An RNA of 177 nucleotides, treated with 2A3 and DMS and read out base by base. The data come from the RNA Mapping Database (RMDB), library OK1LIB. Values cover nucleotides 27 to 126. The DMS profile rests on 3,383 reads. DMS adducts were read by reverse transcription with MarathonRT. Conditions: 150 mM KOAc, 10 mM MgCl2 and 150 mM bicine (pH 8.5), 24 C.

RNA sequence: GGGAACGACUCGAGUAGAGUCGAAAAGAAAAGAAGGAGGCCGUAGUAGAUCAGUGGUGACGAAAGUCAACUCCAUAGGUCACCUCUUCCGCCGAUCCGUAUUAUGGCCGAUGGAGGUGGAGAGAAAGGCUAAUCUAUACUUCGGUAUAGAUUAGCCAAAAGAAACAACAACAACAAC
Reactivity to 2A3 in 0.01 (KOAc 150mM, MgCl2 10mM, bicine 150mM(pH8.5), 24C), signal-to-noise 1, nucleotides 027 to 126: g040a000a070a000a000g030a000a050g040g010a020g000g030c030c040g000u010a000g010u000a000g000a050u000c060a030g040u000g020g020u050g040a000c020g020a100a000a000g000u030c000a010a100c020u010c010c000a010u050a010g000g010u020c000a010c000c000u000c000u000u030c000c000g020c020c010g000a020u050c000c000g000u030a060u030u040a050u090g020g050c000c000g000a010u110g000g000a000g000g000u000g000g040a000g000a000g040a060a130a000
Reactivity to DMS in 0.01 (KOAc 150mM, MgCl2 10mM, bicine 150mM(pH8.5), 24C), signal-to-noise 2, nucleotides 027 to 126: g010a070a070a090a150g000a100a050g010g000a180g000g010c010c000g000u020a030g000u020a050g000a020u020c080a000g030u010g030g020u030g000a020c010g000a150a070a150g020u000c040a020a040c090u010c000c020a030u000a000g000g000u010c010a010c050c000u000c030u000u000c050c040g000c040c010g000a050u010c030c080g000u010a070u000u020a030u000g010g010c000c030g040a080u030g000g020a020g020g070u000g000g020a070g000a120g000a160a110a120